[RMDB]
An RNA of 177 nucleotides, treated with 2A3 and DMS and read out base by base. Values cover nucleotides 27 to 126. DMS adducts were read by reverse transcription with MarathonRT.
RNA sequence: GGGAACGACUCGAGUAGAGUCGAAAACGCAGCAUGUAUCCAAUGCCGCGGACCGUAUGGAUCAUUGGCUCCCGGUCGGAGUCGAUCUUCUUCCUCAGAUAGGAGAUAUACAGGUCGACAAUGCUGGGGAUAGUGAAGGCUUCGGCCUUCACUAUCCAAAAGAAACAACAACAACAAC
Reactivity to 2A3 in 0.01 (KOAc 150mM, MgCl2 10mM, bicine 150mM(pH8.5), 24C), signal-to-noise 1, nucleotides 027 to 126: c020g000c000a000g020c000a000u080g040u200a100u000c040c030a080a130u190g010c040c010g000c060g010g000a040c000c000g030u030a100u250g120g050a160u240c070a080u050u170g070g000c070u040c030c000c020g000g050u090c090g020g010a020g000u010c000g000a000u020c000u040u000c010u120u040c000c000u130c070a090g040a290u240a040g160g000a010g000a010u130a020u010a170c160a040g000g000u010c000g000a020c000a040a010u030g070c000u000g000g000
Reactivity to DMS in 0.01 (KOAc 150mM, MgCl2 10mM, bicine 150mM(pH8.5), 24C), signal-to-noise 1, nucleotides 027 to 126: c050g020c000a000g000c000a020u030g000u020a180u020c150c140a090a050u000g000c010c000g050c100g040g000a170c030c000g000u010a060u000g030g000a160u020c090a070u020u010g000g000c170u000c010c010c010g000g020u010c150g000g000a300g010u000c000g000a000u010c010u000u000c020u020u000c040c010u000c170a170g000a230u020a140g010g010a030g000a060u000a120u010a100c210a070g020g030u000c000g010a030c010a090a140u010g010c070u010g000g000